[RMDB]
RNA sequence: GGGAACGACUCGAGUAGAGUCGAAAAAUACAAUGUCCUAUGCAGCACGACAUGCAUUAGGUGCUCAAGGAAUGCCUGUGGCAGGAAUGCAUGAUUAAGGAGCCAGUGCUUUUUCUGCAGACAUGGAUAUGAGGAAUGAGCUUUGCAUCUCUGGCUACUCCUAUGCCUCAUUCGUGAGGCAUAGGAGAAAAGAAACAACAACAACAAC
Reactivity to 2A3 in 0.01 (KOAc 150mM, MgCl2 10mM, bicine 150mM(pH8.5), 24C), signal-to-noise 3, nucleotides 027 to 156: a000u280a060c150a050a100u130g040u040c000c000u010a080u080g040c040a010g000c000a010c180g100a090c040a050u040g030c010a000u040u140a050g110g000u040g020c030u010c040a020a060g060g050a170a090u110g110c020c010u080g000u080g060g000c010a020g000g080a020a000u040g000c020a010u050g020a060u090u150a100a040g090g000a000g060c050c020a010g010u020g050c000u060u070u030u000u040c010u010g030c000a020g030a110c030a080u160g040g040a050u070a030u190g040a060g010g050a060a090u050g000a020g020c000u080u140u120g000c020a070u000c010u010c000u060g030g000c010u060a040
Reactivity to DMS in 0.01 (KOAc 150mM, MgCl2 10mM, bicine 150mM(pH8.5), 24C), signal-to-noise 1, nucleotides 027 to 156: a110u010a070c090a060a140u030g010u000c010c070u000a110u000g060c030a110g000c040a070c090g040a140c060a060u000g010c040a040u000u000a140g020g050u000g010c000u000c030a130a090g040g000a200a050u000g060c000c000u010g000u000g020g010c050a110g020g010a030a070u010g010c020a050u000g030a170u010u000a130a040g000g000a070g020c050c030a120g000u000g000c030u010u000u000u010u010c030u010g000c000a110g010a150c030a100u050g030g030a070u000a080u000g010a150g010g030a120a110u000g000a070g020c080u000u000u020g010c000a100u000c040u000c010u000g000g020c000u000a110
An RNA of 207 nucleotides, treated with 2A3 and DMS and read out base by base. Reactivities are given for positions 27 through 156. For 2A3 the reverse transcriptase was SuperScript II with manganese. Source: RMDB library OK3TST, as collected in RNAgym. For DMS the reverse transcriptase was MarathonRT.